[RMDB]
RNA sequence: GGGAACGACUCGAGUAGAGUCGAAAAACCAACGGCACAUGCAGGGUAGCUAUGUCCGGAACGGAUAACCGCUGAAAGCAUCUAAGCGGGAAGCCAGCCCCAAGAUGAGUUCUCCCACUGUUUAUAAGGUAAGACUCCCGGAAGACCACCGGGUUAACUUUUUAAUUAGGUUCGCCUAAUUAAAAAGAAAAGAAACAACAACAACAAC
Reactivity to DMS in 0.01 (KOAc 150mM, MgCl2 10mM, bicine 150mM(pH8.5), 24C), signal-to-noise 2, nucleotides 027 to 156: a130c040c010a060a040c070g000g060c030a020c030a080u010g010c040a060g040g010g040u010a120g010c030u000a040u000g030u000c000c050g000g010a070a110c080g020g010a110u000a110a150c010c020g020c000u020g010a150a080a170g020c090a100u000c020u010a060a060g000c020g030g010g000a080a040g030c030c010a150g020c060c000c000c030a030a190g020a120u000g020a130g000u030u000c030u000c010c000c010a160c110u000g000u000u000u000a130u000a080a110g010g000u000a060a110g000a120c070u000c000c010c020g020g010a080a080g000a110c050c040a140c010c010g000g010g010u000u000a020a140
Reactivity to 2A3 in 0.01 (KOAc 150mM, MgCl2 10mM, bicine 150mM(pH8.5), 24C), signal-to-noise 2, nucleotides 027 to 156: a000c010c010a000a050c030g050g000c040a040c020a040u070g010c040a080g120g010g050u070a040g040c040u040a040u120g000u000c030c000g070g040a090a070c060g010g000a010u030a090a090c000c000g020c010u030g030a140a140a110g060c020a060u050c040u050a010a030g000c000g030g010g010a010a030g030c000c000a010g030c010c000c010c010a040a030g040a090u120g010a020g070u100u020c020u020c050c000c000a070c010u010g040u110u120u010a180u050a080a040g030g030u040a110a010g030a080c030u030c050c000c000g030g020a090a050g070a110c040c020a020c030c000g000g020g000u000u040a010a010